The record gives the reactivity of an RNA of 177 nucleotides to 2A3 and DMS. The data come from the RNA Mapping Database (RMDB), libraries RFM100 and RFMREP. The reactions ran in a buffer of 150 mM KOAc, 10 mM MgCl2 and 150 mM bicine (pH 8.5), at 24 C. Reactivities are given for positions 27 through 126. Values are in units of 0.01, from 0 to 300, in steps of 10. For 2A3 the reverse transcriptase was SuperScript II with manganese. DMS (dimethyl sulfate) methylates the pairing face of unpaired adenines and cytosines.
RNA sequence: GGGAACGACUCGAGUAGAGUCGAAAAAGUGCCGCUUACGAGCGGCACAACAGUGGGGGAGCCAGGAAGUAUUGAUGUUUCUGCCAGUUUAGCGUCAACACUUGCUGGUUUCCUCUCUGGAGCAUAACAAUAUCUUGGACUUCGGUCCAAGAUAUUGAAAAGAAACAACAACAACAAC
Reactivity to 2A3 in 0.01 (KOAc 150mM, MgCl2 10mM, bicine 150mM(pH8.5), 24C), signal-to-noise 5, nucleotides 027 to 126: a000g000u010g000c000c000g000c000u090u050a100c300g100a010g020c000g000g000c000a000c000a000a000c000a000g010u030g000g010g000g000g000a000g000c000c000a010g040g080a000a000g010u000a020u030u010g010a010u010g070u020u090u070c100u120g170c080c060a100g020u090u070u130a030g010c010g000u010c000a010a000c000a010c020u010u120g100c010u020g000g010u000u010u000c000c000u000c000u010c000u000g000g000a030g040c070a150u090a190a020
Reactivity to DMS in 0.01 (KOAc 150mM, MgCl2 10mM, bicine 150mM(pH8.5), 24C), signal-to-noise 3, nucleotides 027 to 126: a070g020u000g010c010c010g030c000u010u020a140c200g020a050g020c000g020g030c010a000c000a020a040c010a000g020u000g000g000g000g000g020a010g000c010c000a010g000g000a020a020g000u000a160u010u010g000a000u010g020u000u010u010c100u020g000c100c100a060g000u020u050u000a040g000c010g020u000c010a000a010c070a000c000u000u000g000c000u010g000g000u000u000u000c000c000u000c000u000c000u000g000g020a190g000c160a080u010a080a170